[RMDB]
RNA sequence: GGGAACGACUCGAGUAGAGUCGAAAAUCGCUAGUUAUGAAUGUUUUAUCAUGAUUAAAGACGUCUUCAUUGAGAGGUAUAACACAUGGGAAAUCUGUGCCCGCGCUUGGCUCGAAGACAGUGAUGGGUCGUACUUUGUGUUCGCACAAAGUACGACAAAAGAAACAACAACAACAAC
Reactivity to 2A3 in 0.01 (KOAc 150mM, MgCl2 10mM, bicine 150mM(pH8.5), 24C), signal-to-noise 1, nucleotides 027 to 126: u000c000g010c100u050a000g000u000u040a050u000g030a280a060u000g210u070u010u120u180a000u060c030a000u000g000a030u060u020a300a000a000g030a000c040g000u000c000u000u000c000a170u230u230g030a000g000a000g090g050u110a040u010a050a090c220a000c010a000u190g000g000g080a070a100a020u110c060u080g000u030g050c000c000c000g010c000g000c120u050u060g060g000c000u000c000g050a000a000g000a000c060a060g040u050g100a010u040g000g210
Reactivity to DMS in 0.01 (KOAc 150mM, MgCl2 10mM, bicine 150mM(pH8.5), 24C), signal-to-noise 1, nucleotides 027 to 126: u000c010g020c130u000a020g000u000u070a010u050g000a100a060u000g000u070u000u000u000a070u000c020a020u000g000a080u000u030a000a200a060g000a100c060g000u000c000u000u000c000a200u030u050g000a160g000a020g000g000u020a040u000a140a040c120a070c070a020u020g040g040g000a090a100a160u000c070u000g050u000g000c000c080c060g030c050g060c000u000u000g000g010c030u040c080g030a010a050g000a000c040a050g020u000g000a040u000g060g050
This 177-nucleotide RNA was probed chemically with 2A3 and DMS. 2A3 adducts were read by reverse transcription with SuperScript II with manganese. Conditions: 150 mM KOAc, 10 mM MgCl2 and 150 mM bicine (pH 8.5), 24 C. For DMS the reverse transcriptase was MarathonRT. Reactivities are given for positions 27 through 126.